[RMDB]
RNA sequence: GGGAACGACUCGAGUAGAGUCGAAAAUCACGGAUGCCAAGUGCAUAGAGGAAGCGAGCAAAGGUGGUUUCUUUCGCUUUUUCCAGCGCGUUAACCACGUUUUGUGCCGAUUUUGGCCCCAUACGCACCCUAAUUUACCAUUCGUGGUAAAUUAGGGAAAAGAAACAACAACAACAAC
Reactivity to 2A3 in 0.01 (KOAc 150mM, MgCl2 10mM, bicine 150mM(pH8.5), 24C), signal-to-noise 5, nucleotides 027 to 126: u070c030a020c100g110g020a020u040g010c000c010a200a060g080u100g110c010a030u070a070g090a020g070g060a070a020g050c050g040a020g040c030a030a020a020g040g020u020g010g030u040u040u030c020u050u190u060c010g000c000u070u040u020u110u050c060c020a020g000c010g010c000g040u020u030a020a020c010c010a020c030g020u010u030u060u070g060u070g040c030c040g030a060u040u030u030u110g060g020c020c000c000c000a080u100a100c050g000c040a070
Reactivity to DMS in 0.01 (KOAc 150mM, MgCl2 10mM, bicine 150mM(pH8.5), 24C), signal-to-noise 8, nucleotides 027 to 126: u000c060a120c100g010g010a050u000g010c020c030a090a120g020u010g020c040a050u000a070g010a120g000g000a090a070g010c060g010a230g020c050a040a030a050g000g030u000g000g010u000u000u000c050u000u000u000c020g000c010u010u000u000u010u010c130c140a120g000c030g000c300g010u000u000a040a060c030c010a030c020g010u000u000u000u000g020u000g000c040c020g010a140u000u000u000u000g000g010c030c020c000c060a100u010a060c140g010c160a190

Chemical mapping of a 177-nucleotide RNA with 2A3 and DMS. DMS adducts were read by reverse transcription with MarathonRT. Reactivities are given for positions 27 through 126. The 2A3 profile rests on 9,956 reads. The RNA was probed in 150 mM KOAc, 10 mM MgCl2 and 150 mM bicine (pH 8.5) at 24 C. The DMS profile rests on 11,837 reads. It was measured as part of the RMDB library OK2TST.